[RMDB]
RNA sequence: GGGAACGACUCGAGUAGAGUCGAAAACAAAUGACUGAAAGUUUGUAACUAUGCUACCUAAAUAUGAUUGAAUCUGCUCUUUCUCUAGUAGAUUUACUACCUUUACAACUUCUUUUGUAGAAGGAUGAGCCGCAUUACUCUUCGGAGUAAUGCGGCUAAAAGAAACAACAACAACAAC
Reactivity to 2A3 in 0.01 (KOAc 150mM, MgCl2 10mM, bicine 150mM(pH8.5), 24C), signal-to-noise 1, nucleotides 027 to 126: c000a000a000a160u260g160a050c280u130g150a150a160a260g000u000u000u100g000u080a000a180c150u000a000u300g000c000u130a230c180c050u300a130a230a090u300a100u100g100a030u070u150g000a050a000u000c000u000g050c070u130c200u020u050u000c000u020c050u000a000g000u000a000g000a000u010u010u010a070c000u000a000c000c000u000u000u000a070c000a020a020c100u110u130c030u160u070u000u000g030u100a130g110a020a000g000g000a000u080g050